Structure probing data (2A3) for a 177-nucleotide construct. Reactivities are given for positions 27 through 126.
RNA sequence: GGGAACGACUCGAGUAGAGUCGAAAAAAGAGAAUAACGCUUGGUUUGUGGUUCCAAGCUAAGUCUAAAUAGUCGUCGAGUUCGCAGUCUUGGACUCGGAUGAGUGACACUGUUUAUGAAGAACGUCUGCAGGUCUUGGAUUCGUCCAAGACCUGCAAAAAGAAACAACAACAACAAC
Reactivity to 2A3 in 0.01 (KOAc 150mM, MgCl2 10mM, bicine 150mM(pH8.5), 24C), signal-to-noise 2, nucleotides 027 to 126: a000a000g220a000g000a070a110u300a260a060c090g000c000u010u010g000g000u040u130u090g050u010g010g050u190u010c000c000a030a000g000c000u000a030a000g030u010c000u030a010a010a000u020a000g000u000c060g000u010c010g000a000g050u000u020c030g030c170a000g000u030c040u220u300g090g000a000c000u000c000g090g070a170u130g060a000g040u260g040a000c000a000c130u050g030u010u000u000a110u170g010a000a040g050a070a000c000g120u010c010
The reactions ran in a buffer of 150 mM KOAc, 10 mM MgCl2 and 150 mM bicine (pH 8.5), at 24 C.